Source information: This 207-nucleotide RNA was probed chemically with 2A3 and DMS. For 2A3, 4,165 sequencing reads were counted.

[RMDB]
RNA sequence: GGGAACGACUCGAGUAGAGUCGAAAACAGUGGCCGCUGGGCCAUCAAGAGCCAGGAUAUGGGAGCUUACUGAAGCGCGCACGGUAAGCGAAGAACAUAUCUGGCUCGUAGUGGCCUGUGCUGAAGCGCGCACGGCAACCGAAAGGUGCGAGCCCAAGAGUGUUACUUUGUUCGCAAAGUAACACUCAAAAGAAACAACAACAACAAC
Reactivity to 2A3 in 0.01 (KOAc 150mM, MgCl2 10mM, bicine 150mM(pH8.5), 24C), signal-to-noise 2, nucleotides 027 to 156: c070a030g030u140g060g000c000c000g010c020u020g010g000g000c010c010a000u080c020a040a070g000a000g010c000c020a050g140g050a020u000a000u020g040g000g040a060g000c000u010u000a000c010u020g040a250a150g010c000g000c000g000c000a010c000g000g000u000a000a000g000c010g040a080a050g030a020a010c000a000u000a000u020c000u010g010g000c000u000c000g010u000a000g000u000g000g000c000c010u010g000u000g000c000u010g020a120a060g000c010g000c000g000c000a010c020g000g000c000a000a020c010c010g020a080a040a010g020g000u010g000c020g010a070g000c000c000c000a060a030
Reactivity to DMS in 0.01 (KOAc 150mM, MgCl2 10mM, bicine 150mM(pH8.5), 24C), signal-to-noise 1, nucleotides 027 to 156: c030a100g000u000g000g030c050c020g020c050u000g040g040g000c000c020a000u000c050a100a060g000a050g050c000c020a030g020g000a020u000a010u040g060g020g000a200g000c020u000u010a030c050u010g000a080a010g020c010g060c000g000c000a300c100g050g000u010a010a010g020c000g000a070a120g020a130a230c010a000u000a020u020c020u000g020g000c000u020c000g000u000a030g030u000g010g050c000c000u000g010u000g000c040u000g000a020a070g000c010g050c030g030c000a300c030g010g040c020a020a140c030c010g000a080a190a170g020g030u010g010c020g000a140g000c010c000c020a040a300